Conditions: 150 mM KOAc, 10 mM MgCl2 and 150 mM bicine (pH 8.5), 24 C. This 177-nucleotide RNA was probed chemically with DMS and 2A3. 2A3 adducts were read by reverse transcription with SuperScript II with manganese.
RNA sequence: GGGAACGACUCGAGUAGAGUCGAAAAUAAUCUGUUUCUCUAUAAGAACACUCAAUUUUCACGCUUUCUGUCUUCUUUCUUCCAGGGCUCUCCCCUUGCCCUAGGCUCUGGCCGUUGCGCCCGGCGGGACUUCUGUAUCAUUCGUGAUACAGAAGUCAAAAGAAACAACAACAACAAC
Reactivity to DMS in 0.01 (KOAc 150mM, MgCl2 10mM, bicine 150mM(pH8.5), 24C), signal-to-noise 4, nucleotides 027 to 126: u020a100a070u030c100u020g000u030u000u000c010u000c050u010a120u030a120a100g010a050a080c100a030c060u020c100a060a060u010u000u010u000c080a110c090g010c030u000u010u010c050u010g020u010c010u010u010c020u000u000u000c010u000u010c050c080a060g000g000g010c020u000c050u000c000c010c010c030u010u010g010c000c010c010u000a050g000g000c040u000c040u000g000g000c040c030g010u020u000g000c050g010c010c010c020g020g020c050g020g000
Reactivity to 2A3 in 0.01 (KOAc 150mM, MgCl2 10mM, bicine 150mM(pH8.5), 24C), signal-to-noise 8, nucleotides 027 to 126: u100a010a060u070c060u060g060u010u070u010c030u000c030u030a110u040a170a090g050a080a010c040a030c040u090c060a140a140u020u030u100u080c080a070c050g040c020u020u100u030c020u040g100u020c010u060u000c000u030u110u000c010u050u020c030c010a030g020g000g010c000u010c020u040c040c010c000c000u000u060g020c010c000c000u020a050g020g020c010u000c020u050g060g000c000c000g050u030u040g010c030g020c020c020c000g020g020c000g020g050

High 2A3 reactivity points to a flexible backbone, as in loops and unpaired stretches.